[RMDB]
RNA sequence: GGGAACGACUCGAGUAGAGUCGAAAAGAUAUGGACCAGAAAACUCAUCGGUUGUAGACAUGCUCGAAGGAUCGGAAACGAUCUCAAGAGCAACAGCUACACCCGAUGAGUUUUCUGGUCCUAAGUCCUUCUUUAGAUCGUUCGCGAUCUAAAGAAGAAAAGAAACAACAACAACAAC
Reactivity to DMS in 0.01 (KOAc 150mM, MgCl2 10mM, bicine 150mM(pH8.5), 24C), signal-to-noise 2, nucleotides 027 to 126: g000a070u010a220u020g020g020a030c000c000a030g000a020a000a040a000c010u020c000a000u010c000g020g010u000u010g020u000a020g000a050c140a300u020g020c000u000c000g030a300a300g000g000a030u010c000g050g000a100a090a300c010g010a000u030c000u010c050a000a300g000a010g000c000a030a060c300a140g000c000u000a010c010a030c030c010c000g000a000u000g020a020g010u000u000u000u000c000u000g040g000u000c000c000u000a030a050g020u010c060
Notes: The record gives the reactivity of an RNA of 177 nucleotides to DMS. Conditions: 150 mM KOAc, 10 mM MgCl2 and 150 mM bicine (pH 8.5), 24 C.